[RMDB]
RNA sequence: GGGAACGACUCGAGUAGAGUCGAAAAACUGUCGUUGGUGUCGCGAUGGAAUCUCCACCAGCCGCGCCCUGUUCCGCUUCGUCAUCCAACGCCAGCUGGUUUUGCUUCUCCACGAUCUCAUCCACGAGACCUCAGGACGAUUCGUCGUCCUGAGGUCAAAAGAAACAACAACAACAAC
Reactivity to 2A3 in 0.01 (KOAc 150mM, MgCl2 10mM, bicine 150mM(pH8.5), 24C), signal-to-noise 2, nucleotides 027 to 126: a000c070u070g030u060c020g040u060u060g000g030u060g040u070c020g000c020g030a030u060g040g000a050a090u040c010u010c010c020a040c030c020a010g020c040c000g000c020g000c030c000c000u040g030u050u030c010c020g010c000u020u020c000g060u020c020a080u040c020c030a030a050c010g020c010c010a000g000c010u070g140g000u040u070u080u150g030c030u020u000c010u010c030c000a000c030g050a090u000c020u010c010a070u060c040c010a070c130g060a060
An RNA of 177 nucleotides, treated with 2A3 and read out base by base. Conditions: 150 mM KOAc, 10 mM MgCl2 and 150 mM bicine (pH 8.5), 24 C.